[RMDB]
RNA sequence: GGGAACGACUCGAGUAGAGUCGAAAAGAGUCCACCAUAUGUGAAACAUUUGGACACCAUGGGAGGUCGUGGACCGUGGCAGCCCGAGAUCUCUGCGGGAGAUUCAUGAUGAGCGGCUCCAUCAAUAGGCUGCUUACGGCUUCGGCCGUGGGCAGCCAAAAGAAACAACAACAACAAC
Reactivity to 2A3 in 0.01 (KOAc 150mM, MgCl2 10mM, bicine 150mM(pH8.5), 24C), signal-to-noise 4, nucleotides 027 to 126: g080a030g020u000c000c000a010c010c020a060u050a040u100g100u030g180a100a120a050c030a090u060u010u120g050g040a030c010a020c050c030a030u070g030g020g040a100g020g020u040c020g040u070g040g010a010c010c000g000u020g030g000c030a030g010c000c000c040g040a040g000a030u010c040u010c030u080g040c090g100g170g000a030g000a030u110u040c040a040u140g050a030u070g030a010g010c020g020g000c020u000c020c010a050u070c040a030a110u100a150
Reactivity to DMS in 0.01 (KOAc 150mM, MgCl2 10mM, bicine 150mM(pH8.5), 24C), signal-to-noise 3, nucleotides 027 to 126: g000a040g000u000c020c030a120c120c020a020u010a020u020g010u040g000a180a080a280c010a060u010u030u020g030g020a140c000a140c040c040a010u010g010g000g000a120g000g010u000c030g010u020g000g000a120c060c020g030u000g000g000c260a060g010c020c040c050g060a130g020a030u000c010u000c020u020g020c160g000g000g000a040g000a030u020u020c090a140u000g000a040u020g000a250g000c090g000g000c020u010c010c090a070u010c100a050a040u030a170